[RMDB]
RNA sequence: GGGAACGACUCGAGUAGAGUCGAAAAUUACUGAAGCAAAUCUCCAAACGCCAACGAUGAGCGUUUCGCAAUCGCCGCUUAAGGCUUUUGCCGAGGCUGCUUGAGCCUUGUUACCAAAGAAAAGCCGAAAACCCAAAUGUCUUCGGACAUUUGGGAACACUGUAAACAAGUUCGCUUGUUUACAGUGAAAAGAAACAACAACAACAAC
Reactivity to DMS in 0.01 (KOAc 150mM, MgCl2 10mM, bicine 150mM(pH8.5), 24C), signal-to-noise 2, nucleotides 027 to 156: u000u000a140c040u010g010a200a040g040c020a100a100a050u000c010u000c020c020a070a080a030c000g010c010c020a090a140c070g010a100u000g000a110g050c000g020u010u010u000c050g040c030a130a010u020c070g000c030c030g010c140u000u000a100a120g030g010c010u000u000u020u000g000c030c020g010a130g000g010c010u000g000c030u000u000g010a050g010c010c000u010u000g020u000u000a240c070c040a050a040a170g000a110a050a080a150g020c030c070g010a090a030a080a210c000c020c010a000a010a020u000g010u000c000u000u010c300g020g000a000c000a040u000u000u000g010g010g020a030a020
Reactivity to 2A3 in 0.01 (KOAc 150mM, MgCl2 10mM, bicine 150mM(pH8.5), 24C), signal-to-noise 4, nucleotides 027 to 156: u130u050a060c010u120g080a080a000g030c060a090a100a130u080c070u020c030c040a050a000a000c010g000c030c010a110a070c130g160a210u190g030a060g040c030g000u020u040u090c040g000c020a020a020u010c010g010c020c000g070c150u210u240a110a080g000g000c000u000u000u000u010g010c010c010g010a000g010g000c040u080g000c020u060u050g010a000g000c000c000u020u030g030u060u140a050c020c030a040a000a000g020a010a060a010a010g020c010c020g120a090a080a040a040c010c000c000a000a010a000u000g000u020c000u020u050c140g050g000a000c000a000u000u000u000g000g000g010a000a000